[RMDB]
RNA sequence: GGGAACGACUCGAGUAGAGUCGAAAAGGAUUACAAACACUUUUUGCGUUUCUGCUUGGAUGGCAGAACGAGGUGUUUACAUGCUUACGUCGUUGCAGAAAAGUUUGUGCCGAAAGUUUGGAUAUGCACUACCUCUAUGAUUCGUCAUAGAGGUAGUAAAAGAAACAACAACAACAAC
Reactivity to DMS in 0.01 (KOAc 150mM, MgCl2 10mM, bicine 150mM(pH8.5), 24C), signal-to-noise 6, nucleotides 027 to 126: g010g000a050u010u030a050c110a030a020a020c010a040c100u000u000u010u020u010g020c020g010u030u030u010c000u000g010c010u000u010g030g010a140u050g000g000c010a000g000a000a020c010g000a040g010g020u000g010u010u010u020a100c190a040u030g010c050u010u020a090c040g000u010c050g000u020u010g000c020a040g000a030a040a050a090g000u010u010u010g010u010g020c010c020g000a080a070a050g010u010u000u010g010g010a080u010a070u020g000c220
Reactivity to 2A3 in 0.01 (KOAc 150mM, MgCl2 10mM, bicine 150mM(pH8.5), 24C), signal-to-noise 9, nucleotides 027 to 126: g070g010a080u150u150a080c080a010a020a010c020a050c040u060u080u050u190u270g080c040g050u070u090u060c020u010g060c030u110u160g270g100a210u270g170g000c000a000g000a000a000c000g010a010g000g000u020g010u030u000u020a040c040a030u120g040c010u070u050a070c030g030u010c010g050u060u120g020c030a020g120a100a070a030a030g040u050u070u060g040u040g030c030c020g100a120a090a060g040u060u110u090g090g030a060u060a050u210g070c060
Chemical mapping of a 177-nucleotide RNA with DMS and 2A3. For DMS, 26,009 sequencing reads were counted. For 2A3 the reverse transcriptase was SuperScript II with manganese. Reactivities are given for positions 27 through 126. The RNA was probed in 150 mM KOAc, 10 mM MgCl2 and 150 mM bicine (pH 8.5) at 24 C.